Structure probing data (DMS and 2A3) for a 207-nucleotide construct. For DMS, 10,995 sequencing reads were counted. For 2A3 the reverse transcriptase was SuperScript II with manganese. Values are in units of 0.01, from 0 to 300, in steps of 10.
[RMDB]
RNA sequence: GGGAACGACUCGAGUAGAGUCGAAAAGAUCUGAUUCGUCAGAUCAUCAUGGGGUCGGGAGCAAAGAACUACUGCGCGAAACAUUCUGAAGCCUCCACGGAAUGGAGCAGCUUUGUUAACGACGGAGGCACCCUGGAUCGGCCAUUUCGAUGGCCAAUAUCGUAUACAAAUUCGUUUGUAUACGAUAAAAAGAAACAACAACAACAAC
Reactivity to DMS in 0.01 (KOAc 150mM, MgCl2 10mM, bicine 150mM(pH8.5), 24C), signal-to-noise 4, nucleotides 027 to 156: g010a020u000c000u000g000a050u000u010c300g040u010c010a010g010a010u000c000a080u000c060a110u010g020g000g020g030u000c020g020g020g010a100g000c030a050a050a090g010a120a170c040u010a140c010u000g000c010g000c060g000a170a120a190c030a080u000u000c010u000g010a060a120g020c000c010u000c020c020a300c000g010g000a030a220u000g000g000a100g020c010a020g000c010u010u000u000g020u000u000a080a090c040g020a090c020g020g020a060g050g030c010a070c030c000c000u000g010g010a120u000c080g010g030c000c000a040u000u000u000c230g010a080u000g000g010c000c010a020a130
Reactivity to 2A3 in 0.01 (KOAc 150mM, MgCl2 10mM, bicine 150mM(pH8.5), 24C), signal-to-noise 9, nucleotides 027 to 156: g000a010u000c000u010g000a030u030u130c200g080u030c110a010g010a010u010c000a030u080c020a070u170g030g000g020g020u030c030g020g000g020a010g010c010a010a000a020g020a100a040c080u250a060c020u290g020c050g010c060g200a110a060a020c010a020u020u000c010u020g040a130a040g020c000c010u000c000c010a010c000g020g000a010a010u030g010g040a080g000c020a010g030c020u050u030u010g030u030u050a060a030c030g050a020c050g020g000a010g010g000c010a030c000c000c010u050g060g070a140u180c130g010g000c000c000a020u100u140u100c220g120a020u010g000g000c000c000a000a000